[RMDB]
RNA sequence: GGGAACGACUCGAGUAGAGUCGAAAAGAUAUGGAAAGCGAUUGGGAGCUGGUCGGAAACGACCCAGCAUCGAUCAAUCUUUGGCUUUCCUAAGUCAAAGAGUUCGUGCGUUCGCGCACGAACUCAAGUACUUGAAUAACUUCGGUUAUUCAAGUACAAAAGAAACAACAACAACAAC
Reactivity to 2A3 in 0.01 (KOAc 150mM, MgCl2 10mM, bicine 150mM(pH8.5), 24C), signal-to-noise 2, nucleotides 027 to 126: g010a020u070a050u080g010g020a050a000a000g020c030g020a020u000u070g130g090g010a040g000c010u010g000g000u000c010g010g010a060a030a050c000g000a020c050c070c000a010g000c020a180u240c020g060a090u110c010a030a010u000c060u150u200u200g130g000c000u000u000u010c000c010u010a070a010g020u000c070a170a050a100g000a000g000u000u010c030g000u020g010c000g000u040u100c300g000c010g000c110a010c010g000a010a010c000u000c000a000a010
Reactivity to DMS in 0.01 (KOAc 150mM, MgCl2 10mM, bicine 150mM(pH8.5), 24C), signal-to-noise 2, nucleotides 027 to 126: g000a050u000a300u020g010g010a000a000a000g020c020g030a020u000u010g000g020g000a040g010c000u000g000g000u000c000g000g000a040a080a100c000g010a020c110c090c070a000g020c000a180u010c100g010a090u010c050a020a000u010c020u010u010u020g020g010c000u000u000u010c010c000u010a010a070g000u000c020a070a090a090g000a010g000u000u000c000g000u010g020c000g040u000u000c290g030c000g000c000a000c020g000a010a020c000u000c000a010a070

Notes:
Conditions: 150 mM KOAc, 10 mM MgCl2 and 150 mM bicine (pH 8.5), 24 C. The record gives the reactivity of an RNA of 177 nucleotides to 2A3 and DMS. The 2A3 profile rests on 4,167 reads. The DMS profile rests on 2,338 reads. 2A3 adducts were read by reverse transcription with SuperScript II with manganese.